[RMDB]
RNA sequence: GGGAACGACUCGAGUAGAGUCGAAAACUCACCAUCUCGUGUCACUAAAACACUAGGUGCAUUUACUGGAGAGGGGUUUGCCCUCGGUAUGGCAGAGUGGAUAGGUGAGAUCAAUAGCCUAGGUAAACGCCUAUUUGUCGUUCGCGACAAAUAGGCGAAAAGAAACAACAACAACAAC
Reactivity to 2A3 in 0.01 (KOAc 150mM, MgCl2 10mM, bicine 150mM(pH8.5), 24C), signal-to-noise 2, nucleotides 027 to 126: c010u010c000a020c000c000a080u000c010u000c040g150u030g030u050c030a060c220u190a060a040a110a050c030a040c040u030a040g100g110u080g060c030a100u060u130u080a080c020u070g160g010a020g010a010g100g050g030g070u150u200u240g120c010c000c010u000c000g020g000u100a090u070g000g030c010a010g080a050g100u190g030g020a000u030a120g020g010u000g010a030g000a090u010c020a060a170u050a030g050c000c010u070a100g120g170u200a110a070a030
Reactivity to DMS in 0.01 (KOAc 150mM, MgCl2 10mM, bicine 150mM(pH8.5), 24C), signal-to-noise 1, nucleotides 027 to 126: c000u000c020a050c040c000a030u000c000u000c110g050u010g020u000c040a100c190u000a180a090a080a070c070a030c070u010a040g030g020u000g000c110a130u000u000u000a010c090u000g010g020a090g040a010g000g030g030g000u000u010u000g010c000c010c010u000c030g000g020u000a070u030g020g020c000a030g050a210g070u030g000g000a000u000a110g010g000u000g000a000g000a200u000c140a030a050u010a210g000c000c000u000a000g010g040u000a050a070a250
Structure probing data (2A3 and DMS) for a 177-nucleotide construct. Source: RMDB library OK2TST, as collected in RNAgym. Conditions: 150 mM KOAc, 10 mM MgCl2 and 150 mM bicine (pH 8.5), 24 C.